[RMDB]
About this RNA
Structure probing data (2A3) for a 177-nucleotide construct. Values cover nucleotides 27 to 126. The data come from the RNA Mapping Database (RMDB), library RFM100.

RNA sequence: GGGAACGACUCGAGUAGAGUCGAAAAGCUUUGUAGAGGCAUUCUUUUUGACUACUUUUCUCUAGCGUGCCAUUUUAGUUUUUGACGGAGAUUCGAAUGAACUUAAGUUUAUGAUGAAGGUAUGGCUGUAUGUCCCCUGUUUCGACAGGGGACAUACAAAAGAAACAACAACAACAAC
Reactivity to 2A3 in 0.01 (KOAc 150mM, MgCl2 10mM, bicine 150mM(pH8.5), 24C), signal-to-noise 2, nucleotides 027 to 126: g000c050u020u070u080g000u060a160g080a130g180g160c000a020u000u200c000u000u000u000u000u050g000a000c000u120a300c000u140u070u140u250c000u000c000u000a020g040c000g020u010g000c000c040a020u060u050u020u100a030g000u160u010u000u020u060g000a080c030g070g000a130g000a100u050u030c000g000a010a100u250g010a090a000c000u070u190a150a090g000u040u000u090a040u050g090a090u070g000a000a000g020g010u040a000u120g020g000c010u020
2A3 adducts were read by reverse transcription with SuperScript II with manganese.